[RMDB]
RNA sequence: GGGAACGACUCGAGUAGAGUCGAAAAGUCUGUGCGUUUCCAUUUGAGUAUCCUGAAAACGGGCUUUUCAGCUUGGAACGUACAUAUUAAAUAGUAGGAGUGCAUAGUGGCCCGUAUAGCAGGCAUUGAGGCGAGGAUUGUUUCGACAAUCCUCGAACGAGCAAUGUGGAUUCGUCCACAUUGCUCGAAAAGAAACAACAACAACAAC
Reactivity to 2A3 in 0.01 (KOAc 150mM, MgCl2 10mM, bicine 150mM(pH8.5), 24C), signal-to-noise 1, nucleotides 027 to 156: g030u020c010u020g020u000g000c000g000u000u090u170c020c030a040u060u020u010g060a060g060u100a150u070c010c000u030g030a100a000a000a050c040g050g010g000c050u040u130u040u040c030a030g040c030u000u030g000g000a000a000c000g020u000a000c000a000u010a010u010u140a040a140a050u120a020g060u030a030g000g010a050g070u060g000c070a100u080a100g080u010g030g000c010c050c000g000u010a010u060a170g000c010a000g000g020c000a000u030u190g060a050g080g100c010g010a000g000g010a000u000u010g030u000u100u070c020g000a010c000a000a000u060c060c000u000c000g000a000a010

Background: Structure probing data (2A3) for a 207-nucleotide construct. Values cover nucleotides 27 to 156. The reactions ran in a buffer of 150 mM KOAc, 10 mM MgCl2 and 150 mM bicine (pH 8.5), at 24 C.